[RMDB]
RNA sequence: GGGAACGACUCGAGUAGAGUCGAAAAGGCCGAGCACCAACCCAGGGAGGGAAUAUAUACAAGGUGCGAUUUAAGGAGCAAGUAUGUAUAGGGAAGUGAAGAAGCGCCGAAAACUUCACACGGCCGAAUAUCCGAUACCUUUCGAGGUAUCGGAUAUAAAAGAAACAACAACAACAAC
Reactivity to DMS in 0.01 (KOAc 150mM, MgCl2 10mM, bicine 150mM(pH8.5), 24C), signal-to-noise 2, nucleotides 027 to 126: g010g010c010c010g010a210g010c110a190c030c040a190a240c000c010c020a150g010g000g030a150g010g020g000a110a070u010a070u000a010u000a090c040a080a210g010g020u000g010c020g000a110u000u010u000a150a110g000g010a190g000c020a030a090g010u000a030u010g020u000a010u000a060g010g000g000a070a080g020u000g000a020a040g020a090a070g000c170g000c060c130g000a050a050a080a090c010u000u000c010a030c050a110c060g000g000c000c000g000a070
Reactivity to 2A3 in 0.01 (KOAc 150mM, MgCl2 10mM, bicine 150mM(pH8.5), 24C), signal-to-noise 1, nucleotides 027 to 126: g040g000c000c070g000a010g030c050a040c060c000a040a070c010c020c050a030g100g140g000a190g040g000g060a050a000u060a000u010a000u020a140c040a080a160g100g020u050g000c000g000a030u170u120u140a180a190g080g040a050g020c020a050a020g000u010a050u140g030u020a020u030a040g000g020g000a000a130g090u000g020a020a000g020a130a000g060c060g000c030c020g060a040a060a010a030c050u010u020c020a020c000a010c030g020g000c030c020g000a040